[RMDB]
RNA sequence: GGGAACGACUCGAGUAGAGUCGAAAAGACAAGAAGAAGGAUACGCAGAUAGUAGCAAGCGAAGGCUUGUUUAUGGAAAAUCUGGAAACUAUCGCCAUGAGUUUCAAUGCCCAGUCACGGAUGAACGCAGUGGAUCUUUAUUCGUAAAGAUCCACUGAAAAGAAACAACAACAACAAC
Reactivity to 2A3 in 0.01 (KOAc 150mM, MgCl2 10mM, bicine 150mM(pH8.5), 24C), signal-to-noise 8, nucleotides 027 to 126: g090a020c050a010a040g130a030a010g050a020a030g100g020a040u060a130c050g000c060a010g010a030u060a050g050u030a010g010c000a010a010g000c010g150a170a020g170g000c010u000u010g000u060u110u050a060u090g080g020a040a040a040a080u030c040u040g020g030a000a040a050c020u060a060u080c010g000c030c010a060u120g020a010g040u030u050u080c080a060a050u110g020c020c020c010a020g040u080c020a010c110g030g030a060u120g070a120a010c060g000
Reactivity to DMS in 0.01 (KOAc 150mM, MgCl2 10mM, bicine 150mM(pH8.5), 24C), signal-to-noise 7, nucleotides 027 to 126: g010a070c090a060a050g010a100a090g000a120a070g010g010a090u010a040c090g030c020a040g000a040u000a100g020u010a030g010c010a000a020g000c000g010a130a060g010g000c000u000u010g000u000u000u020a050u010g010g010a070a050a100a060u020c010u000g000g000a090a050a070c070u010a050u010c050g000c070c040a070u020g010a100g020u000u000u010c050a060a100u030g000c020c020c020a060g020u010c050a060c090g000g000a070u030g020a070a060c200g020